[RMDB]
RNA sequence: GGGAACGACUCGAGUAGAGUCGAAAAGUCCACCUUGGCCUGUGCCCCCUUACCUUCCGUGUGGGAGUCCCCCUCAGCUGUCACCCUCCACUGCACCAGAACGCCCAUCAGGCUGAGCAGGGGCCAGUGCCGACUUAAUUUUCGAAUUAAGUCGGCAAAAAGAAACAACAACAACAAC
Reactivity to DMS in 0.01 (KOAc 150mM, MgCl2 10mM, bicine 150mM(pH8.5), 24C), signal-to-noise 1, nucleotides 027 to 126: g020u000c020c020a080c110c070u000u000g020g000c010c010u000g010u040g020c030c010c000c040c040u000u000a120c150c050u010u000c030c030g020u000g010u020g010g000g000a060g030u000c010c010c000c060c030u000c040a100g010c060u000g000u000c100a100c020c020c010u000c060c010a070c110u000g010c050a050c040c010a110g020a080a080c140g000c010c020c010a080u000c110a080g010g010c040u000g010a030g020c110a110g020g010g000g010c080c050a020g030
Annotation: Chemical mapping of a 177-nucleotide RNA with DMS. For DMS the reverse transcriptase was MarathonRT. The DMS profile rests on 1,348 reads. The data come from the RNA Mapping Database (RMDB), library OK2TRN.